[RMDB]
RNA sequence: GGGAACGACUCGAGUAGAGUCGAAAAGAACGAUUCGAGAAAUGCCGAGCCGACCCGGCGAGACUCCUGAAGGGUGUGCUCACUGCCCUGGGUCAGUACAAUGAGUUCAAGAAGUCCUGGAACCUAACAUCCCUCCUAUGUUCGCAUAGGAGGGAUGAAAAGAAACAACAACAACAAC
Reactivity to DMS in 0.01 (KOAc 150mM, MgCl2 10mM, bicine 150mM(pH8.5), 24C), signal-to-noise 3, nucleotides 027 to 126: g020a050a050c110g010a150u000u010c040g010a180g020a090a100a110u010g000c060c030g000a120g020c020c030g000a090c050c040c030g010g020c030g000a060g000a060c050u000c030c060u010g040a120a070g000g000g020u010g000u010g030c040u000c030a110c110u010g000c030c020c060u020g010g010g020u000c020a040g020u000a050c140a040a100u010g020a100g000u000u000c030a040a110g000a070a140g010u010c030c010u010g010g020a060a090c020c040u010a050a190
Reactivity to 2A3 in 0.01 (KOAc 150mM, MgCl2 10mM, bicine 150mM(pH8.5), 24C), signal-to-noise 2, nucleotides 027 to 126: g020a070a020c050g020a060u050u070c020g000a010g100a130a170a070u140g010c050c020g000a010g020c010c000g050a020c020c000c000g000g000c000g000a020g000a010c040u070c000c040u200g090a110a130g070g010g010u020g030u150g030c000u030c020a070c060u060g020c000c010c010u060g030g030g000u040c030a010g000u000a010c040a050a080u070g030a040g110u020u030c010a010a020g080a080a010g040u000c000c010u020g030g110a100a080c000c020u010a040a060